The record gives the reactivity of an RNA of 177 nucleotides to DMS and 2A3. DMS adducts were read by reverse transcription with MarathonRT. For DMS, 5,020 sequencing reads were counted. Conditions: 150 mM KOAc, 10 mM MgCl2 and 150 mM bicine (pH 8.5), 24 C. It was measured as part of the RMDB library OK2TST.
[RMDB]
RNA sequence: GGGAACGACUCGAGUAGAGUCGAAAAAUGGACUCCAUGCACGGUGGGUUUGGAAUGCAGAUGAGUGCACCUCACGAGGAUGGCAAAUGGAUGCAGUUUCUGAGUGAAGAUGCCUUCAACGCCACCACAACCAAGACAGAUUCGUCUGUCUUGGUUGAAAAGAAACAACAACAACAAC
Reactivity to DMS in 0.01 (KOAc 150mM, MgCl2 10mM, bicine 150mM(pH8.5), 24C), signal-to-noise 5, nucleotides 027 to 126: a120u010g000g010a100c050u000c010c030a070u010g000c070a110c150g000g010u000g010g000g020u010u010u000g000g000a100a070u010g010c060a060g000a180u000g010a040g010u010g000c020a040c030c020u010c020a020c030g000a300g000g000a030u020g010g010c020a010a110a150u010g030g010a130u000g010c020a030g000u000u000u000c000u010g010a300g010u000g010a050a040g000a070u000g000c010c030u000u000c070a030a090c210g010c010c020a030c030c030a210
Reactivity to 2A3 in 0.01 (KOAc 150mM, MgCl2 10mM, bicine 150mM(pH8.5), 24C), signal-to-noise 3, nucleotides 027 to 126: a000u080g050g030a020c030u000c030c030a030u080g020c100a030c080g010g040u030g020g020g030u050u070u050g070g040a110a070u170g040c040a040g030a190u110g020a060g040u130g000c000a020c000c020u000c000a000c010g010a020g020g020a040u010g020g000c030a050a040a140u210g160g040a070u050g030c020a060g040u050u060u020c020u030g050a040g020u040g010a010a040g030a050u020g000c020c000u000u080c050a070a020c050g010c040c000a000c000c010a010